[RMDB]
RNA sequence: GGGAACGACUCGAGUAGAGUCGAAAAGAACCAUCAUACGGAAAGAAAGUCGGCGUAGAUGGAAACCGACGAAAGAAAGAAAGCUACGGAGGAAUAAUGGCCGCUCACGUAGCAAAGGCCAGAGAAAGGAUAUCUCUUACUUCGGUAAGAGAUAUCCAAAAGAAACAACAACAACAAC
Reactivity to DMS in 0.01 (KOAc 150mM, MgCl2 10mM, bicine 150mM(pH8.5), 24C), signal-to-noise 3, nucleotides 027 to 126: g010a130a130c020c000a050u000c040a110u020a110c040g000g080a120a090a090g020a130a190a140g000u000c020g030g020c050g010u020a080g000a050u050g010g000a060a110a120c100c020g010a070c040g000a060a060a180g010a110a080a160g010a050a090a040g000c020u000a010c000g000g000a020g000g010a090a100u030a040a050u030g000g000c030c090g040c020u000c020a060c010g020u010a000g010c030a030a020a060g000g020c020c050a050g010a160g000a050a100a150
Reactivity to 2A3 in 0.01 (KOAc 150mM, MgCl2 10mM, bicine 150mM(pH8.5), 24C), signal-to-noise 4, nucleotides 027 to 126: g080a030a040c010c010a030u060c000a050u050a090c030g080g070a240a010a050g170a030a100a020g190u050c030g040g140c010g030u100a040g000a170u010g110g000a030a000a020c000c000g140a050c040g080a100a030a060g130a030a050a000g090a020a110a010g030c020u000a020c010g000g000a020g050g120a100a140u300a230a110u130g160g020c000c040g070c010u020c050a300c060g070u090a000g040c000a010a060a000g000g000c000c000a010g000a000g040a170a090a010
Source: RMDB library OK1LIB, as collected in RNAgym. Chemical mapping of a 177-nucleotide RNA with DMS and 2A3. For DMS the reverse transcriptase was MarathonRT. Conditions: 150 mM KOAc, 10 mM MgCl2 and 150 mM bicine (pH 8.5), 24 C.